[RMDB]
RNA sequence: GGGAACGACUCGAGUAGAGUCGAAAAGAAUAAGAGACACGAACGAUAGUAUCUUAUUCAACUAUUGGAAAGCUGCGAAAAUAGUGUCUCGAAUAAAUAACGGAAACGGAAGCAGCGAAGAAAGAAAGGGAUGACUAUCUUUCGAGAUAGUCAUCCCAAAAGAAACAACAACAACAAC
Reactivity to 2A3 in 0.01 (KOAc 150mM, MgCl2 10mM, bicine 150mM(pH8.5), 24C), signal-to-noise 2, nucleotides 027 to 126: g040a000a010u130a000a040g000a080g000a000c010a000c060g050a200a030c040g000a030u050a080g000u010a020u030c120u080u130a170u080u040c060a000a000c000u120a050u020u030g060g100a080a000a140g020c000u000g000c000g040a040a150a050a000u190a000g000u000g030u020c000u000c000g010a000a000u070a050a030a000u210a040a020c070g010g000a210a050a000c030g100g060a080a000g000c000a010g000c020g080a000a000g120a090a020a000g080a090a110a100
Reactivity to DMS in 0.01 (KOAc 150mM, MgCl2 10mM, bicine 150mM(pH8.5), 24C), signal-to-noise 1, nucleotides 027 to 126: g060a000a000u000a090a060g000a000g000a090c010a140c080g030a040a090c170g000a200u030a090g020u000a040u000c020u040u000a020u000u000c010a130a140c040u000a020u000u000g000g000a050a040a150g010c010u000g030c090g000a070a150a010a000u000a080g050u000g020u000c000u000c000g000a160a100u070a000a040a130u050a140a110c080g000g000a120a100a100c000g030g000a090a010g000c000a000g000c000g080a030a170g020a070a010a150g000a030a110a160

An RNA of 177 nucleotides, treated with 2A3 and DMS and read out base by base.
The reactions ran in a buffer of 150 mM KOAc, 10 mM MgCl2 and 150 mM bicine (pH 8.5), at 24 C.
For 2A3, 1,250 sequencing reads were counted.
Values cover nucleotides 27 to 126.
DMS adducts were read by reverse transcription with MarathonRT.